An RNA of 170 nucleotides, treated with DMS and 2A3 and read out base by base. The RNA was probed in 150 mM KOAc, 10 mM MgCl2 and 150 mM bicine (pH 8.5) at 24 C. The DMS profile rests on 35,239 reads.

RNA sequence: GGGAACGACUCGAGUAGAGUCGAAAAGGGGAGUACACUCGAGGAGUGGAAGGCGUUGUUGGGGGGGAGAUGGGCUUACCUACGGGAAUCCCUGGGUCCCCCUGAUGUCCAGUCCCUCCCCCGUCCGUGACAAGAUCCUUCGGGAUCUUGAAAAGAAACAACAACAACAAC
Reactivity to DMS in 0.01 (KOAc 150mM, MgCl2 10mM, bicine 150mM(pH8.5), 24C), signal-to-noise 7, nucleotides 027 to 129: g000g000g000g000a060g000u060a120c120a050c000u010c050g010a120g030g020a040g030u040g000g000a040a010g020g030c080g030u010u000g020u050u020g030g000g030g030g020g030g030a060g000a140u040g020g000g030c160u010u030a090c000c000u020a090c190g010g010g000a110a040u020c000c000c000u000g000g000g000u000c020c010c010c010c030u000g030a050u030g030u040c040c030a020g020u010c060c050c010u010c000c000c020c000c030g030u050c060c010g010u060g020a270
Reactivity to 2A3 in 0.01 (KOAc 150mM, MgCl2 10mM, bicine 150mM(pH8.5), 24C), signal-to-noise 3, nucleotides 027 to 129: g010g010g000g020a030g040u100a050c040a010c020u060c060g060a070g040g030a030g040u100g020g050a010a060g050g020c050g000u020u030g000u000u000g030g010g010g000g010g000g000a050g020a060u070g000g040g020c020u020u100a240c000c010u040a050c100g020g000g000a010a100u120c000c000c000u080g070g040g050u100c000c010c010c000c000u020g040a050u040g020u000c010c010a020g020u000c010c000c000u010c000c000c000c000c000g070u010c020c010g020u030g020a050